[RMDB]
RNA sequence: GGGAACGACUCGAGUAGAGUCGAAAAGAUAUGGAAGGCGACGAAGACCACGCGAGGUCGUUGAUCUCGGAAACGAGGGAGACCUCGGUCAGAGCCUUCCUAAGUCAAAGUUCGGUUCGCCGAACAACAUCAUCCCUGUCUUCGGACAGGGAUGAUGAAAAGAAACAACAACAACAAC
Reactivity to DMS in 0.01 (KOAc 150mM, MgCl2 10mM, bicine 150mM(pH8.5), 24C), signal-to-noise 2, nucleotides 027 to 126: g000a010u000a300u000g010g010a020a010g010g010c020g000a110c200g020a060a130g000a010c040c010a280c250g010c240g010a000g000g030u000c000g010u010u020g000a010u000c000u000c000g020g010a060a070a170c010g000a030g010g000g000a010g020a010c000c000u010c000g000g000u000c000a010g000a230g020c020c000u000u000c000c000u000a020a100g000u010c050a100a100a120g000u000u020c020g000g020u030u010c250g040c000c000g020a000a030c010a070a150
Reactivity to 2A3 in 0.01 (KOAc 150mM, MgCl2 10mM, bicine 150mM(pH8.5), 24C), signal-to-noise 1, nucleotides 027 to 126: g010a030u060a030u110g000g000a000a000g000g000c020g030a300c050g050a300a040g030a030c030c050a010c140g300c170g070a000g040g000u020c020g020u050u040g010a010u000c000u000c020g000g030a060a060a050c000g000a010g000g000g000a010g000a010c010c000u000c030g000g000u000c000a020g030a000g000c000c000u000u000c000c000u000a020a000g000u000c040a070a050a000g070u010u010c040g010g010u020u060c300g090c100c010g000a000a000c000a000a020